About this RNA:
An RNA of 177 nucleotides, treated with 2A3 and read out base by base.
RNA sequence: GGGAACGACUCGAGUAGAGUCGAAAACACAUUGGAUAAAUUGGUACAUACACACCAACCCUAAAACCUGCUACAUAUAUAAUUGUAUUUACCAACCCUAACCAGCCUAAUCUGUGCUUUUAUGGUACCAUGACCACCUGUUCGCAGGUGGUCAUGGAAAAGAAACAACAACAACAAC
Reactivity to 2A3 in 0.01 (KOAc 150mM, MgCl2 10mM, bicine 150mM(pH8.5), 24C), signal-to-noise 3, nucleotides 027 to 126: c030a000c030a100u110u240g050g000a070u180a050a210a080u070u040g000g030u070a040c040a060u090a020c000a000c000a000c040c050a040a100c040c000c020u090a140a100a030a050c040c010u040g060c070u050a030c100a150u070a030u060a020u120a160a060u240u150g050u070a050u000u050u000a010c010c010a010a050c000c010c040u090a020a020c020c010a020g040c000c000u080a110a160u120c070u080g080u030g060c020u000u080u040u130a120u100g020g050u070a080
Notes: It was measured as part of the RMDB library OK1LIB.